[RMDB]
RNA sequence: GGGAACGACUCGAGUAGAGUCGAAAACAGUCAAUGUGAAGGCGGGCCAGACCAUCGCCGCAUUCUACCAGAGCACCGUCAUGAUCUUUGGCACGAUGGCUCGCUACAUACGUAGAGUUAGGGAAAAGAUGAUACGACGAUUCGUCGUCGUAUCAUCAAAAGAAACAACAACAACAAC
Reactivity to DMS in 0.01 (KOAc 150mM, MgCl2 10mM, bicine 150mM(pH8.5), 24C), signal-to-noise 4, nucleotides 027 to 126: c050a100g010u000c110a110a080u010g000u010g010a120a110g030g000c020g000g010g000c020c030a100g000a150c060c060a070u010c090g010c040c030g000c080a060u000u010c050u000a090c040c050a080g010a070g010c090a040c020c030g020u000c090a050u010g000a080u010c030u000u010u010g000g000c050a050c150g000a110u000g000g010c030u000c040g010c010u000a020c070a050u000a040c160g020u000a070g000a080g010u000u000a060g020g000g000a060a040a100a090
Reactivity to 2A3 in 0.01 (KOAc 150mM, MgCl2 10mM, bicine 150mM(pH8.5), 24C), signal-to-noise 4, nucleotides 027 to 126: c030a000g120u120c070a050a070u050g020u050g150a140a070g070g000c000g000g030g000c010c020a020g060a090c040c030a100u130c110g040c030c010g000c010a010u080u000c030u060a080c030c060a030g010a010g050c060a030c070c030g090u110c030a070u080g070a110u060c070u100u090u070g040g000c040a010c120g060a070u040g020g010c010u010c010g000c020u020a010c020a040u120a020c040g050u040a020g010a030g090u100u130a100g020g040g000a010a090a050a040